[RMDB]
RNA sequence: GGGAACGACUCGAGUAGAGUCGAAAAGUAUAAAAUCUGCAAAUAGUGCUAUUGUUGGAAUCACCGUACCUAUUUAGGUUUACGCUCCAAGAUCGGUGGAUAGCAGCCCUAUCAAUAUCUAGGAGAAAAAACCCAGGACUGUUCGCAGUCCUGGGAACGACUUUCUAAACUUCGGUUUAGAAAGUCGAAAAGAAACAACAACAACAAC
Reactivity to 2A3 in 0.01 (KOAc 150mM, MgCl2 10mM, bicine 150mM(pH8.5), 24C), signal-to-noise 1, nucleotides 027 to 156: g050u040a050u070a300a090a020a100u050c010u070g050c050a010a110a050u200a130g100u090g090c070u070a060u010u150g080u130u120g170g050a060a060u120c020a010c000c010g030u050a050c000c000u070a110u230u300u180a020g050g000u000u000u120a010c030g000c000u000c000c000a050a000g030a010u030c000g000g030u000g060g050a010u000a010g000c020a000g070c000c000c040u080a170u120c050a110a020u020a050u220c000u010a010g000g020a010g000a190a010a000a000a000a000c000c000c000a000g000g000a000c000u030g000u040u060c220g010c080a000g010u000c010c000u000g000g010g000a000a000

An RNA of 207 nucleotides, treated with 2A3 and read out base by base. Values cover nucleotides 27 to 156. The reactions ran in a buffer of 150 mM KOAc, 10 mM MgCl2 and 150 mM bicine (pH 8.5), at 24 C. High 2A3 reactivity points to a flexible backbone, as in loops and unpaired stretches. 2A3 adducts were read by reverse transcription with SuperScript II with manganese. Source: RMDB library M2RFPK, as collected in RNAgym.